Structure probing data (DMS and 2A3) for a 177-nucleotide construct. For DMS the reverse transcriptase was MarathonRT. For 2A3 the reverse transcriptase was SuperScript II with manganese. The DMS profile rests on 1,620 reads. It was measured as part of the RMDB library OK2TRN.

RNA sequence: GGGAACGACUCGAGUAGAGUCGAAAAACUGCGUGGCUUAAGCGUAGCGGCGCGGCGUAUCGCCUGGCGUCGUGCGCUGGCGCGUCGGCAGAAUCUGGUGAAAGAGGGCGCAGAAGGUGCUGAACCGAUGGUUCCAAGGUUUCGACCUUGGAACCAUAAAAGAAACAACAACAACAAC
Reactivity to DMS in 0.01 (KOAc 150mM, MgCl2 10mM, bicine 150mM(pH8.5), 24C), signal-to-noise 1, nucleotides 027 to 126: a110c080u000g000c040g020u010g020g000c010u000u000a100a090g020c000g050u000a050g050c000g010g010c000g040c000g020g000c000g030u010a160u000c070g000c010c010u030g060g020c030g020u000c000g000u000g020c010g010c000u000g000g010c070g000c030g010u000c090g010g000c000a080g000a070a080u010c030u000g010g000u000g000a040a060a100g000a080g010g000g010c060g020c070a080g000a070a060g010g020u000g010c050u000g000a120a090c060c020g020
Reactivity to 2A3 in 0.01 (KOAc 150mM, MgCl2 10mM, bicine 150mM(pH8.5), 24C), signal-to-noise 1, nucleotides 027 to 126: a000c040u040g000c000g020u050g300g000c020u170u200a100a000g010c020g030u030a020g150c000g000g010c000g010c000g030g000c040g030u150a210u300c100g000c020c020u140g180g080c010g010u000c000g030u010g000c000g000c000u020g000g000c050g000c000g000u020c020g050g000c010a020g000a090a070u040c080u110g100g040u040g090a100a040a000g130a080g020g040g000c030g030c040a000g060a140a030g070g000u030g010c020u050g060a070a040c000c050g070